[RMDB]
RNA sequence: GGGAACGACUCGAGUAGAGUCGAAAACGCUAUCUACAUGCAAACGGAGCAUCCAUAUUCUUUAUUUGCCUAUUCAUCCACGUAGGCCGAGGUCUAUACUACGGAUCCUAUAUAUUCCUAGAAACAUGAAACAUUGGAGUAGUCCUACUAUUUACCGCAAAAAAACACAGUUCGCUGUGUUUUUUUGAAAAGAAACAACAACAACAAC
Reactivity to 2A3 in 0.01 (KOAc 150mM, MgCl2 10mM, bicine 150mM(pH8.5), 24C), signal-to-noise 4, nucleotides 027 to 156: c040g010c030u040a040u130c030u070a060c030a100u110g060c050a090a080a020c060g030g010a020g030c030a040u030c030c010a080u070a110u170u100c060u060u210u100a160u070u120u120g010c000c000u030a040u070u110c040a060u060c120c040a030c070g010u020a010g010g000c010c020g030a030g000g030u010c040u080a080u050a150c050u020a050c060g020g010a030u020c000c010u020a020u010a010u010a020u160u020c010c010u030a030g090a060a110a020c050a040u100g040a070a060a020c040a060u070u100g030g000a020g020u020a010g030u050c010c020u040a070c010u040a100u120u100u070a060c020c000g000
Reactivity to DMS in 0.01 (KOAc 150mM, MgCl2 10mM, bicine 150mM(pH8.5), 24C), signal-to-noise 4, nucleotides 027 to 156: c070g020c050u000a110u000c020u000a080c020a090u000g000c050a060a100a090c080g020g000a090g040c040a100u000c040c090a120u000a080u000u000c020u000u000u000a080u020u000u000g050c000c010u000a080u000u000c050a110u000c090c090a070c090g040u000a060g020g030c020c080g000a060g040g020u010c030u010a090u000a080c050u010a060c050g020g010a080u000c040c020u000a100u000a100u010a080u000u000c020c010u000a110g010a150a060a120c080a070u000g010a170a070a080c070a130u000u000g020g000a070g020u000a080g010u000c030c030u000a060c060u000a110u000u000u010a090c050c050g000